[RMDB]
Annotation
The data come from the RNA Mapping Database (RMDB), library RFMREP. Chemical mapping of a 177-nucleotide RNA with DMS and 2A3. The reactions ran in a buffer of 150 mM KOAc, 10 mM MgCl2 and 150 mM bicine (pH 8.5), at 24 C. For DMS the reverse transcriptase was MarathonRT. The DMS profile rests on 6,629 reads. 2A3 adducts were read by reverse transcription with SuperScript II with manganese. Values cover nucleotides 27 to 126.
RNA sequence: GGGAACGACUCGAGUAGAGUCGAAAAAAUGCAUUCUGGGAUUCUGACUGUGACCUGUGUGUGUCUGAUUCACAUCACAGGCAGAGUUCUAGCUAUGCGUAAAGACCAUAGGGUUCGCCCUAUGGUCCUAUAAAGGUCACUUCGGUGACCUUUAUAGAAAAGAAACAACAACAACAAC
Reactivity to DMS in 0.01 (KOAc 150mM, MgCl2 10mM, bicine 150mM(pH8.5), 24C), signal-to-noise 4, nucleotides 027 to 126: a090a030u000g000c000a000u000u000c000u000g000g010g000a000u010u000c000u000g000a020c000u000g000u000g000a020c190c220u010g000u000g020u000g010u000g020u010c240u000g000a120u000u000c010a000c000a070u000c000a000c000a000g000g000c010a000g000a010g020u000u000c010u000a000g000c230u000a000u000g010c000g020u010a060a080a110g010a020c010c000a010u010a000g010g000g010u000u010c280g010c010c000c000u000a000u000g000g010u000c010
Reactivity to 2A3 in 0.01 (KOAc 150mM, MgCl2 10mM, bicine 150mM(pH8.5), 24C), signal-to-noise 2, nucleotides 027 to 126: a000a000u130g000c020a010u020u010c000u010g000g020g010a000u010u000c000u000g010a020c020u020g010u010g030a040c040c080u060g040u010g010u000g010u020g160u150c120u150g150a110u130u080c000a000c000a010u040c000a000c000a000g000g010c000a000g000a000g000u010u000c000u000a000g000c050u020a000u020g000c000g010u020a120a120a020g000a000c000c000a000u000a010g010g000g020u040u040c210g090c010c000c000u010a000u000g000g000u000c000